[RMDB]
The record gives the reactivity of an RNA of 177 nucleotides to DMS. Values cover nucleotides 27 to 126. The reactions ran in a buffer of 150 mM KOAc, 10 mM MgCl2 and 150 mM bicine (pH 8.5), at 24 C. DMS adducts were read by reverse transcription with MarathonRT. For DMS, 2,159 sequencing reads were counted.
RNA sequence: GGGAACGACUCGAGUAGAGUCGAAAAGAUUGGCGUUGAAUUGGACACACCAACGGGCAAAAACGACGGCAGCGUGAAGGGCGUUCAGUAUUUCCAGUGCAAGCCCAAGCACGGCAUGUUUGUGCGAUACUAGGCUACCAUUCGUGGUAGCCUAGUAAAAAGAAACAACAACAACAAC
Reactivity to DMS in 0.01 (KOAc 150mM, MgCl2 10mM, bicine 150mM(pH8.5), 24C), signal-to-noise 3, nucleotides 027 to 126: g010a150u000u000g000g020c080g020u040u000g020a070a150u010u000g020g010a060c050a070c050a080c060c040a040a090c120g000g000g010c050a070a020a050a090a090c110g000a110c110g000g000c040a040g010c040g040u000g010a050a150g000g000g000c050g030u000u000c070a100g020u000a120u000u000u000c060c060a160g000u000g020c050a030a110g010c010c010c020a070a090g000c000a050c040g020g010c100a110u000g010u000u000u010g010u000g020c050g020a250